The record gives the reactivity of an RNA of 177 nucleotides to 2A3 and DMS. Source: RMDB library OK2TST, as collected in RNAgym.
RNA sequence: GGGAACGACUCGAGUAGAGUCGAAAACUCUUGGACAUGAAGUGGUACUGCCCGUCCAUUGCACGGGGGAGUGGGUCGAAAAGCCUGCUAUGUCACUUGCUUGCCCCAAACGGAAGAUUAAUGGACACAGCACUAUUAAUUUCGAUUAAUAGUGCUGAAAAGAAACAACAACAACAAC
Reactivity to 2A3 in 0.01 (KOAc 150mM, MgCl2 10mM, bicine 150mM(pH8.5), 24C), signal-to-noise 6, nucleotides 027 to 126: c010u030c010u030u100g060g020a020c000a060u050g040a060a020g010u030g050g040u100a080c040u140g120c010c000c010g000u020c020c030a130u070u230g020c110a030c050g020g000g000g020g000a010g010u030g010g000g020u080c050g060a070a030a010a050g020c010c010u010g000c000u030a070u150g040u020c010a000c030u010u090g060c010u020u060g070c020c020c020c000a030a070a050c080g080g030a060a030g030a100u120u200a120a090u160g050g000a010c050a010
Reactivity to DMS in 0.01 (KOAc 150mM, MgCl2 10mM, bicine 150mM(pH8.5), 24C), signal-to-noise 9, nucleotides 027 to 126: c050u000c040u000u000g020g020a080c030a050u010g000a060a040g020u000g020g010u000a140c140u010g010c010c020c020g010u000c030c160a100u000u000g010c160a040c100g020g010g000g010g000a040g030u000g010g000g010u000c060g010a110a080a110a200g000c010c010u000g000c020u000a080u010g010u000c020a040c020u000u000g000c040u000u000g010c020c010c010c180a020a090a130c140g000g010a070a060g010a110u000u010a060a050u010g000g010a110c140a230

DMS (dimethyl sulfate) methylates the pairing face of unpaired adenines and cytosines. Reactivities are given for positions 27 through 126. 2A3 adducts were read by reverse transcription with SuperScript II with manganese.